[RMDB]
RNA sequence: GGGAACGACUCGAGUAGAGUCGAAAAUAACCAUUUGUCUGGUAAUGGAAACGAUUUUUUUAGCAUUUUAAUCUGCAAGGAGUCACCCAUGAAAAAGACAGCUGCCGUAAUCUCUGCACUUAUGCUCCCUCUAAAUUGGUUUCGACCAAUUUAGAGGAAAAGAAACAACAACAACAAC
Reactivity to 2A3 in 0.01 (KOAc 150mM, MgCl2 10mM, bicine 150mM(pH8.5), 24C), signal-to-noise 3, nucleotides 027 to 126: u040a000a030c010c000a000u070u040u100g060u000c030u060g020g040u090a060a030u020g030g000a110a110a070c060g010a060u010u030u020u040u020u080u230a030g000c000a030u030u090u010u290a190a120u110c040u060g010c010a030a030g050g000a020g020u000c000a010c000c030c010a020u060g000a080a120a000a000a000g020a010c030a000g000c030u060g000c020c010g020u020a050a110u040c020u000c040u080g030c020a020c040u080u050a050u190g040c020u060c020
Reactivity to DMS in 0.01 (KOAc 150mM, MgCl2 10mM, bicine 150mM(pH8.5), 24C), signal-to-noise 3, nucleotides 027 to 126: u000a090a200c040c010a090u000u000u010g010u010c060u000g000g020u020a090a030u000g000g000a050a120a150c160g000a000u000u000u000u010u000u010u010a130g010c030a050u010u000u010u010a050a120u000c180u000g020c020a060a070g000g010a040g000u000c020a110c080c010c010a040u010g000a100a070a070a080a050g010a020c020a030g000c100u000g000c020c040g010u000a070a040u000c040u000c060u000g020c060a050c090u000u000a060u000g020c050u010c100
Chemical mapping of a 177-nucleotide RNA with 2A3 and DMS. For DMS the reverse transcriptase was MarathonRT. It was measured as part of the RMDB library OK2TST. For 2A3 the reverse transcriptase was SuperScript II with manganese.